[RMDB]
RNA sequence: GGGAACGACUCGAGUAGAGUCGAAAAUCUUGUUAAAUAAAUCGUCAAGGAUCAAGGGAUUCCAGCAACCGUACGUGCUCGCAGUCUGAAUGCCUGCAGCUAGCUCCGGUAGACUAUAGGCAUUUGGCAUAUACCAGCCCUUCGGGGCUGGUAUAUGAAAAGAAACAACAACAACAAC
Reactivity to DMS in 0.01 (KOAc 150mM, MgCl2 10mM, bicine 150mM(pH8.5), 24C), signal-to-noise 2, nucleotides 027 to 126: u010c030u010u020g000u000u020a070a130a130u020a070a110a080u020c070g000u000c090a070a090g000g000a060u000c060a080a110g030g000g000a080u000u010c050c020a080g000c080a060a020c040c030g000u020a040c130g030u000g020c050u000c070g030c160a030g010u020c000u000g000a050a030u000g020c030c020u000g030c050a030g010c020u000a070g000c040u010c090c060g020g000u000a080g000a070c030u000a040u000a020g010g020c010a030u000u000u000g000g010